[RMDB]
RNA sequence: GGGAACGACUCGAGUAGAGUCGAAAACUCCUACAGUUGCAAACCCUGACCUCAGGGUUCAGAUUAGGACUUGGGGACAUGAGAGCACUGUUGGCUAGGGCAACAGACCACGUGACUAUGAAUGUCACAGCUGAAUGGAGUUCGCUCCAUUCAGCUGAAAAGAAACAACAACAACAAC
Reactivity to 2A3 in 0.01 (KOAc 150mM, MgCl2 10mM, bicine 150mM(pH8.5), 24C), signal-to-noise 2, nucleotides 027 to 126: c010u020c000c000u020a030c000a070g070u200u140g010c020a050a060a210c020c010c000u020g050a120c020c020u120c010a010g020g000g020u000u000c000a010g010a200u050u230a080g060g000a020c030u040u040g020g010g000g000a000c010a030u130g000a080g000a020g090c010a000c020u020g030u070u030g000g000c050u060a020g000g010g010c000a030a040c000a030g070a080c030c000a080c110g040u030g010a020c020u090a050u300g210a240a070u230g050u030c000a010
Reactivity to DMS in 0.01 (KOAc 150mM, MgCl2 10mM, bicine 150mM(pH8.5), 24C), signal-to-noise 3, nucleotides 027 to 126: c130u000c010c010u000a030c070a090g020u000u010g000c050a090a140a110c190c010c010u000g010a140c110c150u020c010a020g010g020g000u000u010c020a060g000a260u000u010a070g020g000a010c040u000u010g000g010g010g010a170c050a020u010g010a050g010a290g000c030a060c000u000g020u000u020g020g030c060u010a000g000g000g020c040a020a040c120a060g000a060c070c030a090c200g000u000g000a000c010u000a300u000g010a030a090u000g010u000c010a070